[RMDB]
RNA sequence: GGGAACGACUCGAGUAGAGUCGAAAACUGGCCGACCGGACCGGGGACACGGUGUUCCUCACGCUGCGCAGCGGGCUGGACACCGUGUGCAUCGAUCGCAAGGAAGGUGCCUUUCCGAUCAGGACGCUAUACUUCGUUUCUUCGGAAACGAAGUAUAAAAAGAAACAACAACAACAAC
Reactivity to 2A3 in 0.01 (KOAc 150mM, MgCl2 10mM, bicine 150mM(pH8.5), 24C), signal-to-noise 2, nucleotides 027 to 126: c020u030g090g000c020c010g040a070c020c010g060g000a020c030c000g010g010g010g070a010c000a000c020g000g000u000g020u070u010c020c000u030c010a020c020g020c000u160g080c250g050c180a010g010c020g000g040g000c050u030g010g000a010c010a000c000c000g000u010g000u000g000c000a040u030c020g040a020u030c020g030c160a090a040g050g020a040a030g060g000u090g020c000c010u030u060u000c020c010g010a110u100c060a030g070g000a010c030g000c070
Reactivity to DMS in 0.01 (KOAc 150mM, MgCl2 10mM, bicine 150mM(pH8.5), 24C), signal-to-noise 5, nucleotides 027 to 126: c060u000g010g010c050c030g000a190c040c030g010g010a030c030c010g010g010g000g010a100c020a020c000g000g010u000g000u000u000c000c010u010c010a070c010g040c010u000g030c300g040c250a060g010c000g000g000g010c060u000g000g010a030c000a020c000c000g030u010g000u010g000c010a030u000c030g010a090u010c010g000c200a100a140g010g000a060a210g010g010u000g000c020c180u000u000u000c020c010g000a050u010c040a090g010g010a220c180g000c100